The record gives the reactivity of an RNA of 177 nucleotides to 2A3 and DMS.
RNA sequence: GGGAACGACUCGAGUAGAGUCGAAAAUGGGACGCAUGGAACGCUCCUCACGCGUUAAAGUGGCAAAAUGAAGAAACGGCAAAAAUUGCGCAAUUUCACCGCCACGAAACAGUGAAUUGCGCGUCGAAAAUAUCACCGGAUUCGUCCGGUGAUAUUUAAAAGAAACAACAACAACAAC
Reactivity to 2A3 in 0.01 (KOAc 150mM, MgCl2 10mM, bicine 150mM(pH8.5), 24C), signal-to-noise 3, nucleotides 027 to 126: u060g040g000g000a020c050g000c090a070u020g100g070a080a040c040g000c070u020c020c020u030c010a060c020g070c000g000u030u050a090a120a020g010u000g000g000c020a040a030a070a160u180g000a090a060g050a060a080a030c040g000g000c090a060a060a040a080a110u130u120g000c010g000c020a000a010u030u140u110c000a000c020c080g030c030c010a040c040g030a040a020a030c060a020g010u010g020a000a020u020u000g000c020g010c010g030u040c020g030a090
Reactivity to DMS in 0.01 (KOAc 150mM, MgCl2 10mM, bicine 150mM(pH8.5), 24C), signal-to-noise 4, nucleotides 027 to 126: u000g020g000g010a060c040g010c050a070u000g010g020a110a080c080g020c030u010c040c030u000c090a060c120g010c050g000u010u000a030a120a100g020u000g000g010c020a110a070a060a100u010g020a130a120g010a060a050a050c130g020g010c110a060a050a050a060a060u020u020g010c020g010c010a010a020u010u000u000c000a010c040c150g010c030c010a050c060g020a140a060a130c080a080g010u000g000a030a030u000u000g010c010g030c020g020u000c150g000a130

Conditions: 150 mM KOAc, 10 mM MgCl2 and 150 mM bicine (pH 8.5), 24 C.